[RMDB]
RNA sequence: GGGAACGACUCGAGUAGAGUCGAAAAGACAGACUCUCAGUGAGUGUGUGUGUGUGUCUCAGUGACUGUCAGUGUGUGUGACACACAGACUCAGAGUCUGUGUGUCUGAGAGACUGUCUCUCUCUGACAUCCAGUAAAUUUUCGAAUUUACUGGAUGAAAAGAAACAACAACAACAAC
Reactivity to 2A3 in 0.01 (KOAc 150mM, MgCl2 10mM, bicine 150mM(pH8.5), 24C), signal-to-noise 6, nucleotides 027 to 126: g020a000c010a010g010a040c000u000c000u000c020a050g040u040g160a080g040u050g020u010g000u010g000u000g000u010g010u040g060u000c010u000c070a130g060u120g120a040c030u080g060u220c040a060g010u020g020u010g020u000g030u040g130a000c000a000c000a000c000a000g010a000c020u040c130a090g030a020g240u010c020u030g020u010g010u010g000u000c020u010g000a010g000a000g000a030c000u010g020u000c010u000c000u000c000u000c010u020g030a010
Reactivity to DMS in 0.01 (KOAc 150mM, MgCl2 10mM, bicine 150mM(pH8.5), 24C), signal-to-noise 9, nucleotides 027 to 126: g010a030c020a020g000a110c010u000c010u000c040a080g010u000g010a070g020u000g010u000g010u000g010u000g010u000g010u000g010u000c020u000c100a090g020u010g010a060c040u000g010u010c080a070g020u000g010u010g010u010g010u000g000a040c000a010c000a000c000a010g000a010c000u000c230a140g010a150g010u000c020u000g010u000g010u000g010u000c000u000g000a020g010a030g010a120c030u000g000u000c020u000c070u000c010u000c010u000g010a260